[RMDB]
RNA sequence: GGGAACGACUCGAGUAGAGUCGAAAAGCUUUUUAAGUCCGCCGUCAAAUCCCAGGGCUCAACCCUGGACAGGCGGUGGAAACUACCAAGCUGGAGUACGGUAGGGGCAGAGGGAAUUUCCGGUGGACUUGGCAUGACGUUUCGACGUCAUGCCAAGAAAAGAAACAACAACAACAAC
Reactivity to DMS in 0.01 (KOAc 150mM, MgCl2 10mM, bicine 150mM(pH8.5), 24C), signal-to-noise 1, nucleotides 027 to 126: g050c110u030u000u000u000u000a010a090g000u000c000c010g000c000c000g000u010c000a060a210a290u000c140c030c000a060g010g000g020c130u090c300a150a300c020c000c060u020g040g000a030c120a200g000g050c010g000g010u020g000g000a000a000a050c040u000a000c000c000a030a140g010c000u000g020g000a010g030u000a080c050g000g000u030a030g010g000g000g020c050a120g130a020g010g000g000a000a060u000u000u000c020c030g040g000u020g000g000a110
Reactivity to 2A3 in 0.01 (KOAc 150mM, MgCl2 10mM, bicine 150mM(pH8.5), 24C), signal-to-noise 2, nucleotides 027 to 126: g010c000u000u030u060u030u100a070a000g000u000c000c010g000c010c000g030u000c010a130a290a160u150c030c030c000a000g000g040g000c140u100c140a220a300c010c010c000u010g000g000a020c040a040g030g000c000g000g000u000g010g010a000a020a000c000u000a000c020c000a040a000g000c000u010g010g010a080g070u150a070c060g030g060u090a050g080g010g030g000c120a030g050a000g060g030g060a060a190u100u090u070c020c000g020g040u070g040g000a020